[RMDB]
RNA sequence: GGGAACGACUCGAGUAGAGUCGAAAAGACCGACGUGAGUCGGUCAAGUAUAGCGUACGCGCUAUACAAGCUGUCACUACGGUGACAGCAACCUCCAGCUUCGGCUGGAGGAACCGUUAUCUACGGAUAACGGAUGCCAGAGAGGUGCAGGCUAUAGCUGCCAUCGGCUGACCUAGAGAAGACACAUCAGCUGAUCCUUUGGACCCUCUGACUUGAGACAGAAGUUCUGGGCUUCUCCUCCUGCGGCCUAGCUCUGAGACAAUGAUAGACCACUAUUCGUAGUGGUCAAAAGAAACAACAACAACAAC
Reactivity to DMS in 0.01 (KOAc 150mM, MgCl2 10mM, bicine 150mM(pH8.5), 24C), signal-to-noise 4, nucleotides 027 to 266: g010a010c010c010g010a010c000g010u050g000a290g030u000c000g010g020u000c010a010a070g010u000a010u000a000g000c000g030u010a100c210g020c010g010c000u010a010u000a000c000a130a130g010c000u000g000u000c000a000c000u000a110c220g050g010u000g010a020c000a010g010c010a070a060c010c010u000c000c000a000g010c010u000u020c220g020g030c000u010g000g020a000g010g000a030a040c010c010g000u010u000a000u000c010u000a110c220g020g000a010u000a000a010c000g010g000a080u030g000c080c010a020g010a020g010a100g020g020u000g010c020a020g000g000c270u010a100u020a100g000c110u000g000c050c090a080u000c020g010g000c020u000g000a050c120c110u000a090g010a150g000a130a090g000a110c140a090c220a260u000c010a010g010c020u000g000a040u000c110c070u000u020u010g000g010a070c030c030c050u000c010u010g000a080c070u010u010g000a140g010a130c100a040g000a100a080g000u000u000c030u000g020g010g000c030u000u000c050u000c080c100u010c040c040u000g010c030g010g000c010c020u000a120g010c050u000c020u010g000a140g010a120c120a090a060u020g010a140u010a160
Reactivity to 2A3 in 0.01 (KOAc 150mM, MgCl2 10mM, bicine 150mM(pH8.5), 24C), signal-to-noise 7, nucleotides 027 to 266: g000a000c000c010g000a000c020g120u160g030a100g010u000c000g000g000u000c000a000a000g000u000a000u000a000g000c000g010u020a010c290g000c000g000c150u000a000u000a000c000a000a040g000c000u000g000u000c000a000c000u050a030c260g140g000u000g000a000c000a000g000c000a000a040c000c000u000c000c010a000g010c000u060u210c240g180g000c000u000g000g000a000g000g000a010a040c000c000g000u000u000a000u000c000u020a040c300g100g000a000u000a000a000c000g010g020a020u120g060c020c010a010g010a000g010a040g020g030u060g040c020a000g050g010c030u110a050u140a300g080c070u070g020c030c000a030u020c010g020g000c010u010g010a030c000c080u110a070g030a030g060a300a060g120a080c100a020c010a150u030c010a010g010c010u010g020a060u160c020c040u170u160u090g050g030a030c020c020c000u040c020u020g040a070c030u050u130g060a050g040a100c040a050g090a100a020g060u120u070c040u090g030g030g040c040u070u030c030u060c040c000u040c000c010u020g020c030g060g030c000c010u020a030g020c010u000c010u030g090a070g040a040c050a050a060u270g140a030u210a110

Structure probing data (DMS and 2A3) for a 307-nucleotide construct. The data come from the RNA Mapping Database (RMDB), library POS240. The RNA was probed in 150 mM KOAc, 10 mM MgCl2 and 150 mM bicine (pH 8.5) at 24 C. For DMS the reverse transcriptase was MarathonRT. The 2A3 profile rests on 12,885 reads.